[RMDB]
RNA sequence: GGGAACGACUCGAGUAGAGUCGAAAACAUUGACUAGCCAGUGCCUUCAGGAUCAAGUCAAAAUUCCUAAAUGCAGAGGAGCCCUAACAAACUAGACCCAAGUGUCCCUUCCAGUCUCAUCUUCCAGCACCAUCACAUUGUAUGCACAAGGCACCGAUAAUACGUGGGUAUUCGUACCCACGUAUUAAAAAGAAACAACAACAACAAC
Reactivity to 2A3 in 0.01 (KOAc 150mM, MgCl2 10mM, bicine 150mM(pH8.5), 24C), signal-to-noise 3, nucleotides 027 to 156: c020a080u020u110g030a030c020u050a060g060c020c030a040g030u050g060c020c020u100u090c090a070g010g030a030u100c060a070a000g080u040c030a050a020a040a060u060u080c010c000u050a080a050a020u140g010c020a010g020a040g100g010a030g030c000c010c040u070a110a090c020a090a080a030c030u030a030g030a110c000c000c040a100a090g070u060g080u130c030c000c000u040u010c040c000a030g030u010c010u010c030a100u040c010u080u020c010c010a000g020c000a030c000c010a040u090c000a000c000a060u130u150g050u100a050u110g020c050a030c000a080a050g040g000c000a000c040c020g020a010
Reactivity to DMS in 0.01 (KOAc 150mM, MgCl2 10mM, bicine 150mM(pH8.5), 24C), signal-to-noise 3, nucleotides 027 to 156: c000a140u000u000g020a080c040u000a170g030c010c030a070g010u000g020c030c030u010u010c040a100g020g020a060u000c040a070a100g010u000c080a070a030a050a180u000u000c010c010u000a030a080a090u010g000c020a060g010a110g020g010a210g010c050c020c010u000a060a110c080a090a060a060c070u000a080g010a090c050c010c010a050a150g010u020g000u000c020c020c020u000u000c010c030a080g010u010c020u000c020a080u000c030u000u000c030c020a180g000c020a080c020c040a050u000c030a090c050a090u000u000g030u000a110u000g020c010a120c070a060a040g030g030c010a090c020c040g010a230
Conditions: 150 mM KOAc, 10 mM MgCl2 and 150 mM bicine (pH 8.5), 24 C. This 207-nucleotide RNA was probed chemically with 2A3 and DMS. As a SHAPE reagent, 2A3 marks flexible, mostly unpaired nucleotides at the ribose 2'-OH. Source: RMDB library OK3TST, as collected in RNAgym.